[RMDB]
RNA sequence: GGGAACGACUCGAGUAGAGUCGAAAAUAGACGCUAGAAUGUCCUCAAGGAGGGGCCUCGAUAGUCUCACCAGCCGUGUAUCGAUAUACACGCUUUGAGCGUUAGGCGCGACUACAAUCAACCCAUCCUUAUACUCUCUCUUCGGAGAGAGUAUAAGAAAAGAAACAACAACAACAAC
Reactivity to 2A3 in 0.01 (KOAc 150mM, MgCl2 10mM, bicine 150mM(pH8.5), 24C), signal-to-noise 6, nucleotides 027 to 126: u040a020g030a030c010g010c020u020a050g060a300a060u070g060u070c010c010u050c050a100a100g080g020a040g000g070g000g000c000c030u030c030g060a090u040a160g060u040c000u000c010a030c030c030a020g100c120c070g000u000g000u010a020u050c150g110a030u050a000u000a300c000a000c010g000c000u050u050u060g030a020g000c010g020u030u050a060g020g000c020g000c030g050a010c010u060a030c050a050a100u100c010a050a100c010c010c000a010u070c010
Reactivity to DMS in 0.01 (KOAc 150mM, MgCl2 10mM, bicine 150mM(pH8.5), 24C), signal-to-noise 6, nucleotides 027 to 126: u000a040g000a110c020g010c030u010a110g000a110a050u000g010u010c070c010u010c070a090a140g030g000a090g000g010g000g010c020c020u000c200g000a080u000a110g000u010c000u000c020a070c130c100a080g010c120c060g020u000g010u000a010u000c300g010a110u020a090u000a010c020a000c010g000c040u000u010u000g010a030g010c040g000u000u000a120g010g000c040g020c030g000a070c020u000a030c090a090a070u010c150a070a110c010c000c000a150u010c060
Structure probing data (2A3 and DMS) for a 177-nucleotide construct.
The data come from the RNA Mapping Database (RMDB), library OK2TST.
Values are in units of 0.01, from 0 to 300, in steps of 10.